Structure probing data (2A3) for a 207-nucleotide construct. Values cover nucleotides 27 to 156. For 2A3, 459 sequencing reads were counted. The RNA was probed in 150 mM KOAc, 10 mM MgCl2 and 150 mM bicine (pH 8.5) at 24 C. 2A3 adducts were read by reverse transcription with SuperScript II with manganese. It was measured as part of the RMDB library M2RFPK.

[RMDB]
RNA sequence: GGGAACGACUCGAGUAGAGUCGAAAACGGUUACGCCUUCUUUACCGUUAUCAAGGAAGGUACUCGGCCAUGCUAAGGGAAGCAUUAUUCCGUAGGCGCAUGUCGCCGCCAGCAUGGUGUGAGGGGAAAAAGUAUGCUGGGUUCGCCCAGCAUACAACUGAUGUGCGGAGUUCGCUCCGCACAUCAGAAAAGAAACAACAACAACAAC
Reactivity to 2A3 in 0.01 (KOAc 150mM, MgCl2 10mM, bicine 150mM(pH8.5), 24C), signal-to-noise 1, nucleotides 027 to 156: c020g000g000u060u030a090c090g010c000c010u000u000c000u000u000u040a030c000c000g270u190u140a040u110c110a000a000g030g000a000a000g030g000u050a050c040u040c010g080g020c000c000a000u000g000c000u070a190a250g190g000g000a010a000g000c050a210u080u140a170u150u120c000c000g020u010a040g010g000c000g000c080a230u220g130u280c000g010c020c000g010c000c000a000g000c000a000u000g000g010u040g100u040g010a060g100g070g030g180a010a010a010a010a010g000u010a000u000g000c040u000g000g000g060u060u070c090g050c020c000c010a010g000c030a000u000a010c000a000a000